About this RNA
Chemical mapping of a 170-nucleotide RNA with 2A3 and DMS. The DMS profile rests on 8,806 reads.
RNA sequence: GGGAACGACUCGAGUAGAGUCGAAAACUCUUAGAAACUCUUUAACUAAUGAUGCCUAUUCACGAUUUUUGGGGUUGUUUAACAAGUAUAAGUACUUCUCUGGUGCUAUGGAAACAGCCGCUUAUCGAAACACGGUUGUUCGCAACCGUGAAAAGAAACAACAACAACAAC
Reactivity to 2A3 in 0.01 (KOAc 150mM, MgCl2 10mM, bicine 150mM(pH8.5), 24C), signal-to-noise 5, nucleotides 027 to 129: c010u000c000u030u050a070g060a080a080a070c060u050c050u120u230u150a140a080c070u020a060a070u190g020a030u090g060c000c020u110a100u240u130c200a050c120g040a030u050u060u040u030u170g050g000g030g000u000u000g000u030u000u000a140a000c040a010a000g050u070a050u030a100a030g050u050a030c020u140u150c100u000c080u160g020g000u020g000c020u030a050u090g020g010a000a040a000c010a000g020c000c020g070c060u020u010a070u070c010g040a080a010a000
Reactivity to DMS in 0.01 (KOAc 150mM, MgCl2 10mM, bicine 150mM(pH8.5), 24C), signal-to-noise 4, nucleotides 027 to 129: c110u000c030u010u020a000g030a130a030a110c060u060c070u010u000u000a050a080c060u040a100a120u010g030a000u030g000c000c020u010a000u020u040c160a190c080g000a050u010u020u000u000u010g040g010g040g080u100u020g030u040u010u010a060a070c110a060a050g010u040a090u020a090a060g030u000a100c050u070u000c130u030c090u050g040g040u040g100c030u000a070u040g030g010a010a000a000c000a030g000c060c020g140c080u000u110a040u010c020g000a090a090a030